[RMDB]
RNA sequence: GGGAACGACUCGAGUAGAGUCGAAAAGAUAUGGAGCGGUCCCAGGACAAUGAUGUCGGAAACGAUUGAGUCCAGGACACGCUCCUAAGUCAAAAUCCGAAAUACAUCUUCGGAUGUAUUUCGGAAACGAAUCCACAUCGUUCGCGAUGUGGAUUCGAAAAGAAACAACAACAACAAC
Reactivity to 2A3 in 0.01 (KOAc 150mM, MgCl2 10mM, bicine 150mM(pH8.5), 24C), signal-to-noise 1, nucleotides 027 to 126: g030a000u070a030u240g000g020a020g020c010g030g050u010c020c090c140a150g020g000a020c040a060a300u210g030a000u100g050u000c000g030g000a030a070a030c010g010a000u040u040g020a020g020u000c000c000a000g050g000a080c050a020c190g000c010u000c000c000u000a000a030g000u000c040a020a000a000a250u100c010c020g000a000a000a000u000a020c000a000u010c020u110u110c290g120g030a010u000g000u020a040u010u000u010c020g020g100a000a000a000
Reactivity to DMS in 0.01 (KOAc 150mM, MgCl2 10mM, bicine 150mM(pH8.5), 24C), signal-to-noise 1, nucleotides 027 to 126: g020a020u000a300u000g010g010a020g000c000g010g000u010c010c000c050a150g000g020a010c000a040a170u020g010a020u010g000u000c010g000g000a120a060a270c010g000a020u000u000g010a070g010u010c000c000a220g000g000a000c010a070c000g000c000u000c000c000u000a000a170g000u000c050a060a080a150a130u000c000c000g010a010a010a010u000a010c000a000u000c000u000u000c180g010g000a000u000g000u000a000u000u000u000c000g000g030a010a000a010